[RMDB]
RNA sequence: GGGAACGACUCGAGUAGAGUCGAAAAGAUAUGGAAUCCAGUAGGGAGAUCCUCGGAAACGAGAAGAUCGAAGAACUACGGAUUCCUAAGUCAAAGCUUUUCGUGCGCUUCGGCGCACGAAAAGCAACAUUGACACAUUGUUCGCAAUGUGUCAAUGAAAAGAAACAACAACAACAAC
Reactivity to DMS in 0.01 (KOAc 150mM, MgCl2 10mM, bicine 150mM(pH8.5), 24C), signal-to-noise 1, nucleotides 027 to 126: g010a020u000a300u010g000g030a030a000u000c000c000a130g070u010a020g010g030g010a130g000a030u000c000c000u000c030g020g000a090a050a170c030g000a000g000a100a050g010a030u000c000g030a160a140g000a140a120c000u000a010c020g000g000a020u000u000c000c020u000a020a040g020u000c010a120a160a180g000c000u030u000u000u000c010g080u000g000c000g040c050u000u020c190g020g000c000g000c000a000c000g000a000a000a030a000g020c000a050a030
Reactivity to 2A3 in 0.01 (KOAc 150mM, MgCl2 10mM, bicine 150mM(pH8.5), 24C), signal-to-noise 1, nucleotides 027 to 126: g030a030u060a020u120g000g000a000a000u020c050c080a270g020u000a000g030g000g010a020g000a000u000c010c020u010c000g010g070a100a020a020c020g000a010g070a300a050g010a030u000c000g020a220a030g040a060a030c020u000a010c000g050g000a000u030u000c000c020u000a110a000g000u000c080a190a020a050g040c000u030u030u020u000c010g130u080g130c110g000c070u120u150c300g210g030c070g000c060a000c110g000a000a010a000a000g000c000a020a030

This 177-nucleotide RNA was probed chemically with DMS and 2A3. The data come from the RNA Mapping Database (RMDB), library TTRDEL. For DMS the reverse transcriptase was MarathonRT. For DMS, 1,292 sequencing reads were counted. The reactions ran in a buffer of 150 mM KOAc, 10 mM MgCl2 and 150 mM bicine (pH 8.5), at 24 C.